[RMDB]
RNA sequence: GGGAACGACUCGAGUAGAGUCGAAAAGACAAAAAGUUUUAGAUAAGUACGGCGGUCACUGUGCAUAUUGUGGCAAGAUUUUGGAUUUGAAAACUUUGAGAGUGGAUCAUUUGCAUCCUCAUUAUCGAGGCGGAGAAGAUAGUUUUGAGAAUUAUAACUACCCGAUUUUAUUCGUAAAAUCGGGUAGAAAAGAAACAACAACAACAAC
Reactivity to DMS in 0.01 (KOAc 150mM, MgCl2 10mM, bicine 150mM(pH8.5), 24C), signal-to-noise 1, nucleotides 027 to 156: g030a220c050a050a080a080a080a080g000u000u000u010u030a190g000a130u000a050a140g010u000a030c030g010g010c030g040g030u030c060a100c020u010g040u010g040c050a100u000a080u020u000g060u040g080g020c000a040a090g000a140u000u000u010u020g020g010a200u010u000u020g010a130a070a070a100c070u010u020u010g010a100g010a070g030u000g010g010a070u010c030a190u000u000u040g010c030a070u000c020c020u000c030a070u000u000a020u000c050g000a100g010g040c070g040g010a100g010a040a070g000a110u000a080g000u000u000u000u000g000a190g010a050a070u000u000a040u010a090a260
Reactivity to 2A3 in 0.01 (KOAc 150mM, MgCl2 10mM, bicine 150mM(pH8.5), 24C), signal-to-noise 2, nucleotides 027 to 156: g030a030c010a020a110a010a010a010g040u100u060u130u100a110g150a050u230a070a130g020u070a050c020g040g020c030g070g010u090c010a000c030u020g030u000g060c010a000u030a110u170u150g020u040g060g000c060a020a000g020a060u050u090u100u190g040g000a080u000u070u120g060a050a050a110a100c050u140u220u140g110a140g000a000g000u070g000g030a020u030c040a070u050u150u110g020c000a000u050c000c010u000c030a060u060u300a020u140c050g000a010g020g020c030g020g040a100g010a020a020g010a000u060a020g030u030u100u070u090g010a030g050a000a060u300u300a070u270a240a000